An RNA of 177 nucleotides, treated with 2A3 and DMS and read out base by base. For 2A3 the reverse transcriptase was SuperScript II with manganese. The reactions ran in a buffer of 150 mM KOAc, 10 mM MgCl2 and 150 mM bicine (pH 8.5), at 24 C. DMS adducts were read by reverse transcription with MarathonRT. The data come from the RNA Mapping Database (RMDB), library OK2TRN.
[RMDB]
RNA sequence: GGGAACGACUCGAGUAGAGUCGAAAACGUGCUACAUAUGGUGGACUCUUAUGGGUACACAAGUUCAGCAGAGCAGGCUGUGUAUGUGGGUCUCUGAGCUGUUCAUUCAUAUAUAUUACCAAGGGUCCUUAUCAAUGACUUUCGAGUCAUUGAUAAGAAAAGAAACAACAACAACAAC
Reactivity to 2A3 in 0.01 (KOAc 150mM, MgCl2 10mM, bicine 150mM(pH8.5), 24C), signal-to-noise 5, nucleotides 027 to 126: c030g040u070g060c040u090a150c020a080u060a030u100g030g010u020g020g010a010c010u000c010u060u070a100u280g020g000g050u250a010c030a000c010a030a080g050u080u060c010a010g000c030a020g030a040g230c090a040g190g000c010u020g020u050g030u120a130u130g060u070g040g060g090u010c010u000c010u040g030a030g030c060u020g010u000u010c010a020u130u120c020a000u050a010u050a010u010a050u120u150a060c010c030a040a020g070g000g060u030c030
Reactivity to DMS in 0.01 (KOAc 150mM, MgCl2 10mM, bicine 150mM(pH8.5), 24C), signal-to-noise 8, nucleotides 027 to 126: c180g010u000g010c090u000a050c070a030u000a030u000g010g030u000g000g000a020c010u000c010u000u010a060u010g010g000g020u040a080c030a030c050a050a300g010u000u000c030a020g020c040a070g010a140g020c210a080g000g020c020u000g010u010g020u010a070u010g010u000g000g000g020u000c010u000c040u000g000a070g010c100u000g000u000u000c020a040u000u010c030a030u000a040u000a070u010a070u020u000a090c020c070a090a070g000g010g010u000c060